This 177-nucleotide RNA was probed chemically with 2A3. For 2A3 the reverse transcriptase was SuperScript II with manganese. For 2A3, 461 sequencing reads were counted.
[RMDB]
RNA sequence: GGGAACGACUCGAGUAGAGUCGAAAACCCUUGUCCGAGUGGCAAGGUAUACCACAAUCUCCAACGACAAUCUCUCAUUUGUCAUAUCAGAUAAGAAGGUUGAUACUAACUUUAUAUACCAACAAGGCAAUCAGCACCGUUUCGACGGUGCUGAUUGAAAAGAAACAACAACAACAAC
Reactivity to 2A3 in 0.01 (KOAc 150mM, MgCl2 10mM, bicine 150mM(pH8.5), 24C), signal-to-noise 2, nucleotides 027 to 126: c000c010c000u000u120g080u000c000c040g130a050g030u270g030g000c000a000a040g060g000u000a130u030a160c000c070a000c070a040a040u080c040u000c210c000a070a140c030g020a000c030a000a040u080c030u000c000u010c020a120u000u190u000g070u020c050a000u100a190u220c000a000g000a070u130a170a000g110a040a030g000g000u050u060g040a010u030a110c000u140a250a000c010u010u300u000a030u040a060u030a170c030c070a000a290c080a190a020g050g000